[RMDB]
RNA sequence: GGGAACGACUCGAGUAGAGUCGAAAAGCUUCUUCUUGUUCUCGAGGGCCUUCCUUCUUCGGUGAUCCUGCCUCUCCUUGUCGGUGAAUCCUCCCCUGAGAGGCCUCUUCCUAGGUCCGGAGUCUACGUCGGCAUCCGUUCGCGGAUGCCAAAAGAAACAACAACAACAAC
Reactivity to 2A3 in 0.01 (KOAc 150mM, MgCl2 10mM, bicine 150mM(pH8.5), 24C), signal-to-noise 3, nucleotides 027 to 129: g010c060u040u020c000u010u020c010u040u100g060u090u000c010u010c000g030a050g000g050g020c010c000u010u030c020c000u020u030c040u060u030c050g060g020u050g050a070u040c020c000u050g050c000c000u020c010u020c010c030u080u030g080u070c100g010g010u050g060a040a060u020c020c010u030c000c010c000c000u040g040a010g020a030g030g020c000c000u030c020u040u030c000c010u010a050g000g050u000c000c010g000g000a030g000u000c040u050a080c060g110u090c020
Reactivity to DMS in 0.01 (KOAc 150mM, MgCl2 10mM, bicine 150mM(pH8.5), 24C), signal-to-noise 1, nucleotides 027 to 129: g000c000u020u020c060u020u000c000u020u030g000u010u000c020u010c020g030a000g000g000g000c040c030u000u000c000c000u040u040c030u000u010c080g070g020u030g020a080u000c060c050u020g010c040c010u000c000u000c060c070u080u040g020u000c120g020g060u040g000a200a140u060c060c030u020c030c060c020c020u030g000a080g060a060g010g000c060c090u090c110u000u000c000c030u050a050g000g000u020c070c010g040g000a110g030u020c080u030a120c160g020u060c040
This 170-nucleotide RNA was probed chemically with 2A3 and DMS. Source: RMDB library 15KLIB, as collected in RNAgym. Values are in units of 0.01, from 0 to 300, in steps of 10.